Structure probing data (DMS and 2A3) for a 177-nucleotide construct. For DMS the reverse transcriptase was MarathonRT.
RNA sequence: GGGAACGACUCGAGUAGAGUCGAAAAUUUGUGUUACAUAAAUUAACACUGUUCUCAGGUAAUGAGAGAUCCAAACACCAAGCGCUCCAGGGGCUUUGGGUUUGUCACAUAUGCCACUGUGGAGGAAUGGUAUAAUGACUUUCGAGUCAUUAUACCAAAAAGAAACAACAACAACAAC
Reactivity to DMS in 0.01 (KOAc 150mM, MgCl2 10mM, bicine 150mM(pH8.5), 24C), signal-to-noise 4, nucleotides 027 to 126: u000u010u000g010u000g010u000u010a020c140a300u010a100a080a140u010u000a010a010c000a010c010u000g020u010u000c000u000c020a070g010g020u010a080a100u000g010a030g010a080g000a100u020c070c030a040a050a090c120a040c060c080a090a130g030c170g010c050u010c030c050a120g010g000g000g010c100u010u000u010g000g000g000u000u000u010g000u010c070a050c060a040u000a060u010g000c020c000a080c090u000g010u000g020g010a100g000g010a090a110
Reactivity to 2A3 in 0.01 (KOAc 150mM, MgCl2 10mM, bicine 150mM(pH8.5), 24C), signal-to-noise 2, nucleotides 027 to 126: u070u100u110g010u000g000u010u000a020c020a060u270a130a240a140u090u030a010a010c010a000c020u000g040u050u020c020u000c030a070g140g030u120a090a100u030g010a010g000a000g000a100u040c050c060a000a060a020c070a050c130c010a130a010g210c160g010c100u060c040c050a040g030g000g020g030c060u080u010u030g000g070g050u130u140u090g100u070c010a030c010a090u100a050u150g020c020c010a110c120u130g010u060g120g040a000g000g090a080a070